Structure probing data (2A3 and DMS) for a 207-nucleotide construct.
The reactions ran in a buffer of 150 mM KOAc, 10 mM MgCl2 and 150 mM bicine (pH 8.5), at 24 C.
For DMS the reverse transcriptase was MarathonRT.
For 2A3 the reverse transcriptase was SuperScript II with manganese.
Reactivities are given for positions 27 through 156.
For 2A3, 4,347 sequencing reads were counted.
RNA sequence: GGGAACGACUCGAGUAGAGUCGAAAAUGUGGAAGUACUGCUCGGGGCGGAAGCAUUAAAACCAUUCGAGCUAGUCAAUGCGUGGCGUGUCUCUCCGCAGCGUGUUGGCGAAUGUAAAGAGUGACUAUUGACCACGCAACGUUCGCGUUGCGUGGAACUAUAGGAGACACUUCGGUGUCUCCUAUAGAAAAGAAACAACAACAACAAC
Reactivity to 2A3 in 0.01 (KOAc 150mM, MgCl2 10mM, bicine 150mM(pH8.5), 24C), signal-to-noise 4, nucleotides 027 to 156: u130g000u060g060g040a090a040g060u110a110c050u120g010c000u000c020g010g000g050g000c100g020g060a030a000g020c040a030u090u220a050a040a060a090c060c010a020u080u110c030g000a000g000c010u010a010g000u000c000a000a010u010g010c000g000u030g160g000c000g010u010g000u010c000u000c000u000c010c000g000c020a020g000c010g000u030g000u010u000g000g000c010g000a010a010u060g040u130a020a030a020g010a000g000u020g000a000c000u030a120u080u180g060a070c010c000a000c000g000c000a010a000c010g020u050u060c210g030c000g090u000u000g000c010g000u000g000g000a000a000
Reactivity to DMS in 0.01 (KOAc 150mM, MgCl2 10mM, bicine 150mM(pH8.5), 24C), signal-to-noise 2, nucleotides 027 to 156: u000g020u000g000g010a300a130g010u000a050c040u000g000c030u020c020g030g010g020g020c040g000g030a140a190g030c090a090u010u000a040a080a130a150c030c010a160u010u010c020g000a060g010c000u010a140g020u000c000a000a030u000g000c040g050u000g030g040c000g030u000g020u010c040u010c030u000c070c000g080c030a110g000c030g000u000g030u010u020g000g000c020g020a090a040u000g010u000a030a070a080g010a050g010u000g000a110c040u000a130u000u010g010a180c010c000a020c000g000c000a000a010c010g010u000u000c250g040c080g070u000u000g000c000g070u000g010g000a010a040